[RMDB]
RNA sequence: GGGAACGACUCGAGUAGAGUCGAAAACACAAAGCUGCACAGCAGGCUGUUGCUCAGGCCAGGCGCGAAGAAGCCGAAGCCAAGCAGAAUGUGGAGCGGCUCAGGAAGGAACGCGGCGCGGCCGACCUAUAGGUGAAUGAUUCGUCAUUCACCUAUAAAAAGAAACAACAACAACAAC
Reactivity to DMS in 0.01 (KOAc 150mM, MgCl2 10mM, bicine 150mM(pH8.5), 24C), signal-to-noise 9, nucleotides 027 to 126: c060a090c120a070a110a090g010c020u000g020c060a100c180a190g010c030a050g010g000c030u010g010u000u000g000c170u000c150a090g000g010c010c010a250g010g000c020g010c090g010a110a100g020a130a140g000c000c000g010a100a140g000c010c010a090a090g000c040a060g000a050a070u000g010u000g010g010a170g010c050g000g000c010u000c080a120g010g010a080a090g000g010a100a080c070g010c020g010g010c030g020c090g010g000c020c010g000a080c110c050
Reactivity to 2A3 in 0.01 (KOAc 150mM, MgCl2 10mM, bicine 150mM(pH8.5), 24C), signal-to-noise 6, nucleotides 027 to 126: c070a000c010a020a140a020g030c030u030g030c050a070c050a190g040c000a010g080g010c030u030g050u090u070g020c020u050c120a060g010g010c020c010a030g090g000c000g010c030g060a290a240g080a080a010g010c010c010g020a030a010g030c000c010a020a010g000c020a020g090a170a070u120g020u080g050g060a050g050c010g010g000c010u010c040a030g020g080a080a060g060g030a130a040c040g010c010g140g030c080g020c070g120g020c010c000g020a040c010c000